[RMDB]
RNA sequence: GGGAACGACUCGAGUAGAGUCGAAAAAUCGUCGGGGACAUUGUAAAGGCGGCGAGCGCGGCUUUUCCGCGCCAGCGUGAAAGCAGUGUGGACUGGCCGUCAGGUACCCGUACUGUCACCGUGACCGCACAGACCAGCUGUUCGCAGCUGGUCUGUGAAAAGAAACAACAACAACAAC
Reactivity to DMS in 0.01 (KOAc 150mM, MgCl2 10mM, bicine 150mM(pH8.5), 24C), signal-to-noise 1, nucleotides 027 to 126: a050u000c100g040u000c010g000g000g000g000a000c010a100u000u030g020u010a050a130a100g040g000c020g020g000c030g010a300g060c040g040c040g000g000c110u000u000u020u000c220c000g020c000g010c200c100a090g020c030g000u000g010a020a070a030g030c000a050g010u020g000u010g010g000a200c040u000g020g000c000c000g000u000c010a020g030g010u000a040c120c020c040g000u010a000c060u000g000u000c070a040c010c010g010u020g000a140c080c110g010